[RMDB]
RNA sequence: GGGAACGACUCGAGUAGAGUCGAAAACCCAGGGACCACUCCCCCUGCACAGACAUGAGACCAUAGGGGACCUGUCUGGGUGGCCUCAGGGAUAGGCGCUCCCCAAGGUAAGAGGGCUUUGUUGAGUAUCCUAGCAAUAGUUCGCUAUUGCUAGGAUAAAAGAAACAACAACAACAAC
Reactivity to DMS in 0.01 (KOAc 150mM, MgCl2 10mM, bicine 150mM(pH8.5), 24C), signal-to-noise 1, nucleotides 027 to 126: c010c010c030a190g000g000g000a100c050c040a040c050u000c010c010c000c040c050u010g000c100a110c070a040g010a070c020a050u000g020a130g020a210c000c010a120u010a160g020g000g010g000a160c070c030u000g000u000c010u010g050g010g040u000g010g000c030c020u000c100a120g020g000g010a080u000a020g010g010c190g020c170u000c010c010c010c060a110a100g020g000u020a100a060g000a090g000g010g000c200u000u000u000g000u010u000g000a090g020u000